[RMDB]
RNA sequence: GGGAACGACUCGAGUAGAGUCGAAAACUGCAGCAGGUCAUUUUAGCAACUAUUAGAUAAAACUGGUCUCAGGUCACAACGGGCAGUUGCAGCAGCUGGACUUGGAGAGAAUUACACUGUGGGAGCAGCAAUAUCGCAGAUUCGUCUGCGAUAUUGCAAAAGAAACAACAACAACAAC
Reactivity to DMS in 0.01 (KOAc 150mM, MgCl2 10mM, bicine 150mM(pH8.5), 24C), signal-to-noise 1, nucleotides 027 to 126: c080u010g020c040a030g020c040a030g040g000u040c060a110u010u010u000u000a110g000c050a080a110c200u000a080u010u010a120g010a040u000a070a020a070a080c100u000g010g000u010c040u010c050a050g050g010u000c060a110c080a040a060c230g020g000g010c030a090g000u000u000g020c090a040g010c040a080g010c020u000g010g000a030c060u010u010g040g000a110g020a040g010a090a080u020u000a070c110a080c020u010g000u000g020g050g000a030g000c070a070
An RNA of 177 nucleotides, treated with DMS and read out base by base. Conditions: 150 mM KOAc, 10 mM MgCl2 and 150 mM bicine (pH 8.5), 24 C. Values are in units of 0.01, from 0 to 300, in steps of 10. For DMS, 773 sequencing reads were counted. DMS adducts were read by reverse transcription with MarathonRT.